Record summary: Chemical mapping of a 177-nucleotide RNA with DMS and 2A3. Reactivities are given for positions 27 through 126. For 2A3, 9,018 sequencing reads were counted. For DMS the reverse transcriptase was MarathonRT. The reactions ran in a buffer of 150 mM KOAc, 10 mM MgCl2 and 150 mM bicine (pH 8.5), at 24 C.
[RMDB]
RNA sequence: GGGAACGACUCGAGUAGAGUCGAAAAGAUAGCUCGUUCGCGAGCUAUCAAAUAGGCGCAGUGGGCUAGCGCGACUCAAAAGCCCGAAAGGAAGAGAGAGAAAAAGGUGGUCCUUCGGGACCACCAAGUGUAUAUGUAGCUUCGGCUACAUAUACACAAAAGAAACAACAACAACAAC
Reactivity to DMS in 0.01 (KOAc 150mM, MgCl2 10mM, bicine 150mM(pH8.5), 24C), signal-to-noise 4, nucleotides 027 to 126: g000a010u000a010g000c000u000c000g030u000u010c180g030c020g030a010g010c010u000a000u010c010a020a080a110u010a120g010g000c010g010c010a090g000u010g010g000g020c010u000a070g040c000g000c010g000a170c020u000c050a030a050a060a060g010c000c010c010g010a070a060a090g000g000a030a060g000a050g000a070g000a090g000a050a060a070a100a100g010g010u000g000g000u000c000c000u000u000c180g030g010g010a010c000c000a000c000c000a000a010
Reactivity to 2A3 in 0.01 (KOAc 150mM, MgCl2 10mM, bicine 150mM(pH8.5), 24C), signal-to-noise 3, nucleotides 027 to 126: g000a000u000a000g010c010u000c000g020u050u030c230g010c010g100a000g000c010u000a000u000c000a000a000a010u080a010g010g000c000g000c010a020g100u110g050g010g000c010u010a040g000c010g010c020g070a070c010u010c060a030a090a030a000g010c000c000c000g010a060a040a010g110g040a050a030g050a000g020a000g010a010g040a060a080a010a050a040g010g000u010g000g000u010c000c000u010u030c130g070g010g010a000c010c000a000c000c000a010a000